The data come from the RNA Mapping Database (RMDB), library OK3TST. The record gives the reactivity of an RNA of 207 nucleotides to DMS.

RNA sequence: GGGAACGACUCGAGUAGAGUCGAAAAUGCAUUUCAGAUAAUGGCCCAGUCACUAGAAAGAAACAACAACAACAUAUUGUCAUUUGAAGCCAACAUUAAAAACAGUCUAGCCAUAAAGUUAUAAAGCAGCGUAUAACUUCUGCAUGUAUCACUGGAACCGGCGCGGACCUUUCGAGGUCCGCGCCGGAAAAGAAACAACAACAACAAC
Reactivity to DMS in 0.01 (KOAc 150mM, MgCl2 10mM, bicine 150mM(pH8.5), 24C), signal-to-noise 3, nucleotides 027 to 075: u010g020c060a130u000u000u000c040a180g030a170u010a070a120u000g010g010c020c030c010a260g000u000c090a190c090u000a110g010a010a000a000g000a000a000a000c000a000a000c000a000a000c000a000a000c000a000u000a000